Conditions: 150 mM KOAc, 10 mM MgCl2 and 150 mM bicine (pH 8.5), 24 C. The record gives the reactivity of an RNA of 177 nucleotides to DMS and 2A3. Reactivities are given for positions 27 through 126.

RNA sequence: GGGAACGACUCGAGUAGAGUCGAAAAGGGGAAAAGUAAACGAUGACCCAUCACCAAGUCUACGUUAGAAUGAUAUAUUAAUAUGUAAAAUAUGAUUGUGAACUCUGGGUAGUCCUAUGGUUUGCACGUUAACAGAAAUGUUCGCAUUUCUGUUAACAAAAGAAACAACAACAACAAC
Reactivity to DMS in 0.01 (KOAc 150mM, MgCl2 10mM, bicine 150mM(pH8.5), 24C), signal-to-noise 2, nucleotides 027 to 126: g010g010g000g010a120a090a120a180g030u000a040a000a030c060g000a120u010g020a190c010c020c010a110u020c060a280c000c020a060a090g000u000c000u000a050c030g000u000u000a060g000a150a070u010g000a130u000a030u000a100u010u010a060a110u010a100u010g000u030a070a070a110a060u010a060u010g010a020u000u030g010u000g000a050a030c040u000c160u010g000g010g010u000a100g000u000c000c050u000a040u000g000g000u000u000u000g000c060a120c290
Reactivity to 2A3 in 0.01 (KOAc 150mM, MgCl2 10mM, bicine 150mM(pH8.5), 24C), signal-to-noise 2, nucleotides 027 to 126: g050g030g000g000a060a040a000a060g050u110a060a090a010c040g020a030u070g070a040c000c030c010a040u050c010a020c010c000a010a010g020u000c030u020a030c030g020u030u030a060g030a130a060u050g010a040u060a060u030a020u300u140a190a090u180a080u220g010u070a110a170a040a100u060a050u060g040a040u180u090g030u000g050a040a040c040u020c120u030g000g010g020u020a040g030u000c000c010u060a090u060g040g000u010u050u080g010c050a030c150